[RMDB]
The data come from the RNA Mapping Database (RMDB), library OK3TST. An RNA of 207 nucleotides, treated with 2A3 and read out base by base. The 2A3 profile rests on 545 reads. 2A3 adducts were read by reverse transcription with SuperScript II with manganese.
RNA sequence: GGGAACGACUCGAGUAGAGUCGAAAACUUUGGAGACAGGGUCUUGCUUUGUCACCCAGGCUGGAGUGCGAUAGCAUGAUCACAGCUCACUUCAGCUUUGACCUCCCAGGUUCAAGUGAUCCUCCCACCUCAGCCUCCCAUGUAGCUGGGACUACAACCGCAUUUAAUGGUUCGCCAUUAAAUGCGGAAAAGAAACAACAACAACAAC
Reactivity to 2A3 in 0.01 (KOAc 150mM, MgCl2 10mM, bicine 150mM(pH8.5), 24C), signal-to-noise 1, nucleotides 027 to 156: c000u060u000u070g010g010a050g000a040c130a200g000g030g000u000c040u020u140g170c030u230u200u220g050u150c030a020c000c000c000a010g000g000c000u040g030g000a030g010u000g020c170g150a150u140a120g020c010a030u040g000a000u010c030a000c010a020g000c000u000c040a000c000u000u000c010a000g000c150u040u020u100g010a020c000c000u040c000c000c000a040g000g060u040u030c100a140a050g010u000g000a000u000c010c010u000c000c000c000a020c010c000u000c000a010g030c000c010u000c000c130c000a070u180g010u030a000g000c000u000g000g030g010a030c070u170a210c070a040a090